Chemical mapping of a 177-nucleotide RNA with DMS and 2A3. Values cover nucleotides 27 to 126. Source: RMDB library OK2TST, as collected in RNAgym. In probing experiments dimethyl sulfate is read out at A N1 and C N3, which are open when not base-paired. The RNA was probed in 150 mM KOAc, 10 mM MgCl2 and 150 mM bicine (pH 8.5) at 24 C. For 2A3 the reverse transcriptase was SuperScript II with manganese.

[RMDB]
RNA sequence: GGGAACGACUCGAGUAGAGUCGAAAAAGUCAUUUGCGCCAUGGUGGUGGACUUGCAGCCGGUUUGAAUGAUGUUACAAAUGGUGAAUUGCAGAAACAGUCUAAUGCUUAUGUGAAAAAGUAUGGACGGACAUAACCUAGUUCGCUAGGUUAUGUCCAAAAGAAACAACAACAACAAC
Reactivity to DMS in 0.01 (KOAc 150mM, MgCl2 10mM, bicine 150mM(pH8.5), 24C), signal-to-noise 3, nucleotides 027 to 126: a080g010u000c050a090u000u000u010g030c080g010c060c050a060u000g010g050u010g030g020u000g000g010a090c120u000u000g040c080a160g000c050c040g060g000u010u000u000g030a050a060u000g000a030u010g010u000u000a070c130a040a070a080u000g000g000u000g010a060a060u000u010g010c040a060g000a090a090a070c150a100g020u000c010u000a060a040u000g010c020u000u000a060u010g030u000g000a050a060a050a020a050g010u000a040u010g030g000a070c130
Reactivity to 2A3 in 0.01 (KOAc 150mM, MgCl2 10mM, bicine 150mM(pH8.5), 24C), signal-to-noise 2, nucleotides 027 to 126: a030g080u060c020a020u020u030u120g040c020g000c000c040a040u090g030g000u050g010g050u040g030g060a040c020u040u110g050c040a000g020c010c050g060g030u030u110u000g060a040a010u070g040a020u110g000u140u060a050c030a020a100a030u090g000g010u070g040a100a050u080u050g030c020a010g070a030a070a000c050a030g010u000c000u060a120a030u060g030c010u090u050a110u160g140u060g130a120a020a040a000a030g000u020a050u050g000g000a000c050